The data come from the RNA Mapping Database (RMDB), libraries RFM100 and RFMREP.
The record gives the reactivity of an RNA of 177 nucleotides to DMS and 2A3.
2A3 adducts were read by reverse transcription with SuperScript II with manganese.
The RNA was probed in 150 mM KOAc, 10 mM MgCl2 and 150 mM bicine (pH 8.5) at 24 C.
RNA sequence: GGGAACGACUCGAGUAGAGUCGAAAAUGCUGUGCACUACUUAGUACACGCGUAUCGGUUUGCACUCCAGAUGUAGCAAUUGAAAACGAAGAUAUUCCUGGAAAGUUUGCAACCGCGUGGGUGCUAGAUGAAGGCUUUGAUUCGUCAAAGCCUUCAUAAAAGAAACAACAACAACAAC
Reactivity to DMS in 0.01 (KOAc 150mM, MgCl2 10mM, bicine 150mM(pH8.5), 24C), signal-to-noise 2, nucleotides 027 to 126: u020g010c030u000g010u000g020c090a110c080u000a080c150u010u000a020g000u000a050c000a030c020g030c010g010u000a060u020c090g010g000u000u010u000g010c010a070c120u010c000c000a020g000a120u000g000u010a060g000c100a120a130u010u020g010a060a070a100a150c180g010a070a110g000a080u000a030u000u000c080c020u000g000g010a070a080a110g020u010u020u010g010c030a010a010c000c020g020c000g010u000g000g010g030u000g020c010u000a000g020
Reactivity to 2A3 in 0.01 (KOAc 150mM, MgCl2 10mM, bicine 150mM(pH8.5), 24C), signal-to-noise 3, nucleotides 027 to 126: u120g030c030u080g020u060g020c060a030c090u160a000c040u140u020a010g010u000a010c030a000c000g000c000g010u050a090u170c070g000g040u010u140u160g020c000a000c000u000c000c000a010g020a080u130g160u140a070g130c170a110a160u070u180g070a100a120a000a050c060g020a010a010g080a170u100a080u210u070c010c010u000g000g030a100a230a020g080u090u180u120g000c010a000a000c000c000g020c000g000u000g010g010g000u000g000c000u000a020g000